Overview: Source: RMDB library TTRDEL, as collected in RNAgym. This 177-nucleotide RNA was probed chemically with DMS and 2A3. DMS adducts were read by reverse transcription with MarathonRT. The reactions ran in a buffer of 150 mM KOAc, 10 mM MgCl2 and 150 mM bicine (pH 8.5), at 24 C.
RNA sequence: GGGAACGACUCGAGUAGAGUCGAAAAGAUAUGGACGGUAACGGGAGCCUACUCGGAAACGAGAGGCGAGGAUCGUUGACCGUCCUAAGUCAAAAUCUGAAGGUGUCGUUCGCGACACCUUCAGAAAGAAACUAAAUCUGUUCGCAGAUUUAGUUUCAAAAGAAACAACAACAACAAC
Reactivity to DMS in 0.01 (KOAc 150mM, MgCl2 10mM, bicine 150mM(pH8.5), 24C), signal-to-noise 5, nucleotides 027 to 126: g000a050u010a300u010g000g010a000c000g010g010u000a030a010c000g010g010g010a060g010c000c000u000a140c000u000c000g020g000a110a100a170c000g010a010g010a070g000g010c000g000a040g010g010a040u000c000g000u010u000g010a030c000c010g010u000c010c000u000a010a070g000u000c040a090a080a100a100u000c000u010g000a020a000g000g010u000g020u000c000g020u000u010c190g030c010g000a000c000a000c000c000u000u000c000a000g010a010a060a080
Reactivity to 2A3 in 0.01 (KOAc 150mM, MgCl2 10mM, bicine 150mM(pH8.5), 24C), signal-to-noise 4, nucleotides 027 to 126: g040a000u090a040u140g020g000a000c000g000g000u000a010a000c000g010g020g010a010g000c020c000u170a300c010u170c000g010g030a070a070a030c000g000a000g010a000g010g020c010g000a030g000g010a020u020c010g010u010u080g190a070c000c010g000u000c000c000u000a010a000g000u010c020a010a010a030a280u010c000u010g000a010a000g010g000u000g000u010c020g010u050u190c300g000c010g120a000c000a000c010c000u000u000c000a000g000a000a000a020